Chemical mapping of a 177-nucleotide RNA with DMS and 2A3. For DMS, 38,236 sequencing reads were counted.
RNA sequence: GGGAACGACUCGAGUAGAGUCGAAAAGAAGCAUCCGAAAGCUGUGAGAAAUCCUUGAGUCACAGUGAAAAGCAAGGAUGAAUAUAUAAGCAUAUAGGCGGUUAUGCGACGCGAUAUAGGAUGCGAACCCUAUAGUAAUCUUCGGAUUACUAUAGGGAAAAGAAACAACAACAACAAC
Reactivity to DMS in 0.01 (KOAc 150mM, MgCl2 10mM, bicine 150mM(pH8.5), 24C), signal-to-noise 9, nucleotides 027 to 126: g010a130a190g010c000a000u000c000c000g010a130a130a180g000c010u010g000u010g000a140g000a130a120a030u010c010c010u010u000g010a120g010u020c070a070c130a130g010u040g000a040a080a100a130g010c030a030a040g000g010a030u010g010a080a120u020a070u030a070u030a090a110g010c030a040u000a030u020a060g010g000c060g000g000u010u010a030u010g010c050g010a090c120g000c010g000a050u030a090u010a120g010g000a010u000g000c000g010a070a110
Reactivity to 2A3 in 0.01 (KOAc 150mM, MgCl2 10mM, bicine 150mM(pH8.5), 24C), signal-to-noise 9, nucleotides 027 to 126: g130a060a010g000c000a000u000c000c010g010a040a020a010g020c050u050g040u080g110a060g080a050a130a020u020c010c000u030u040g040a060g110u130c050a040c060a140g100u150g130a070a100a020a020g070c020a020a020g030g010a050u070g040a100a000u120a000u030a010u040a070a040g020c020a010u040a010u060a090g210g030c080g060g030u100u030a020u050g030c030g030a030c060g010c010g020a000u020a000u020a210g000g000a000u000g000c000g010a020a030

Notes
For DMS the reverse transcriptase was MarathonRT. The RNA was probed in 150 mM KOAc, 10 mM MgCl2 and 150 mM bicine (pH 8.5) at 24 C.